[RMDB]
RNA sequence: GGGAACGACUCGAGUAGAGUCGAAAACUCACGGCACGACUCACCGCGUCGUUGAGCGUCAGGCUACCGGGAGCGGCAGCGCUCAGCGGCAGAUCGGCAACCGCGCCGUCCAGCGAGGGAAGCAUCUUUAAGAAAAUAGAUUCGUCUAUUUUCUUAAAAAAGAAACAACAACAACAAC
Reactivity to 2A3 in 0.01 (KOAc 150mM, MgCl2 10mM, bicine 150mM(pH8.5), 24C), signal-to-noise 9, nucleotides 027 to 126: c010u020c010a010c010g010g000c020a010c050g040a040c020u050c090a030c010c010g020c020g010u000c000g000u010u010g000a000g000c000g080u130c060a080g180g000c020u060a080c030c040g060g050g030a060g030c030g050g000c030a010g010c000g000c000u000c000a000g000c000g000g000c000a020g030a140u120c010g010g010c020a020a030c020c010g010c010g000c010c000g000u000c010c010a050g030c030g050a080g020g040g030a050a020g030c020a050u060c030u020
Reactivity to DMS in 0.01 (KOAc 150mM, MgCl2 10mM, bicine 150mM(pH8.5), 24C), signal-to-noise 9, nucleotides 027 to 126: c030u010c030a100c030g010g010c030a060c000g000a050c070u010c130a300c020c030g010c110g010u000c010g020u000u000g010a020g000c010g030u000c050a300g010g000c020u000a090c030c030g000g000g020a080g010c020g000g010c170a160g000c010g000c010u000c010a030g000c010g000g000c020a040g020a070u030c030g010g010c110a130a220c100c030g010c030g010c000c000g010u000c050c040a070g000c060g010a080g000g000g000a080a090g000c100a060u020c070u000